[RMDB]
An RNA of 207 nucleotides, treated with DMS and 2A3 and read out base by base. DMS adducts were read by reverse transcription with MarathonRT. Values are in units of 0.01, from 0 to 300, in steps of 10.
RNA sequence: GGGAACGACUCGAGUAGAGUCGAAAAGGAGCUCUUGGCAUUGUAUGCAGGAUGGGAUCAUACCUUGGGGGUCCGUGCUGGAGGUUGCCUGGCUCACGCGGAGCCGCCUGUGUCAGUGCUGACCACUUGCAGCCACAGGUGUGGGCAGUGAGGCCCACCUAAAUGGGUAUUUCGAUACCCAUUUAGGAAAAGAAACAACAACAACAAC
Reactivity to DMS in 0.01 (KOAc 150mM, MgCl2 10mM, bicine 150mM(pH8.5), 24C), signal-to-noise 2, nucleotides 027 to 156: g030g010a110g010c000u000c020u000u010g020g040c010a080u000u010g020u000a160u000g020c060a060g020g010a130u010g010g000g010a100u000c060a120u000a100c040c030u000u000g020g010g020g020g010u000c010c020g000u010g010c020u000g010g000a090g000g000u000u000g040c050c010u000g000g000c020u000c010a060c070g000c060g020g000a080g040c050c030g030c010c010u000g020u000g000u000c030a090g030u000g020c020u000g020a160c080c050a050c020u000u000g000c050a100g030c050c040a070c040a040g020g030u000g050u010g000g010g030c010a110g030u010g000a120g020g010c010c000c010a060
Reactivity to 2A3 in 0.01 (KOAc 150mM, MgCl2 10mM, bicine 150mM(pH8.5), 24C), signal-to-noise 5, nucleotides 027 to 156: g070g000a060g030c020u020c030u110u060g030g000c010a060u040u130g060u190a050u110g050c040a010g040g050a060u090g030g030g030a040u110c020a040u150a200c040c050u080u080g050g010g000g000g070u050c030c030g050u070g020c080u060g020g100a060g040g030u080u080g020c000c020u020g010g000c000u030c010a040c010g050c060g040g040a030g040c040c010g010c000c010u030g020u010g010u070c050a060g050u030g110c030u030g030a070c000c030a060c060u060u140g020c030a030g050c010c020a020c010a030g000g050u080g010u030g020g030g010c010a030g020u030g060a030g060g040c020c000c000a040